[RMDB]
RNA sequence: GGGAACGACUCGAGUAGAGUCGAAAACAUGGCCAGUGACACAAGUGAGAAUUGGAUGUUAUGACCGUCCAGAAAAGACAAGAUGAGAAAGUGCAGUAUUGACUGUCUUCAAACGCACCUGUCCUUGCUCUUAACGUUUGUUCGCAAACGUUAAGAGAAAAGAAACAACAACAACAAC
Reactivity to DMS in 0.01 (KOAc 150mM, MgCl2 10mM, bicine 150mM(pH8.5), 24C), signal-to-noise 3, nucleotides 027 to 126: c050a110u010g020g010c010c040a050g010u000g010a040c050a070c040a070a060g000u000g010a140g000a100a110u000u000g000g000a090u000g000u000u030a090u000g000a070c190c050g000u000c010c010a110g000a040a050a060a090g000a060c040a030a040g000a110u010g010a150g000a050a050a050g010u010g020c020a030g010u000a190u010u000g010a050c110u000g000u010c040u000u000c030a010a070a090c130g000c050a020c040c040u000g000u010c040c050u010u000g010
Reactivity to 2A3 in 0.01 (KOAc 150mM, MgCl2 10mM, bicine 150mM(pH8.5), 24C), signal-to-noise 3, nucleotides 027 to 126: c040a060u070g050g000c030c000a020g000u010g050a020c020a000c000a080a050g070u060g070a070g030a070a130u090u030g030g000a020u040g050u100u150a140u220g100a070c030c000g010u000c010c000a010g030a040a130a000a010g010a010c030a040a030g030a100u110g020a030g070a110a120a000g070u120g020c000a010g030u050a210u140u150g100a040c010u030g010u030c000u050u000c020a010a060a040c040g000c020a010c010c020u010g010u000c000c000u020u060g020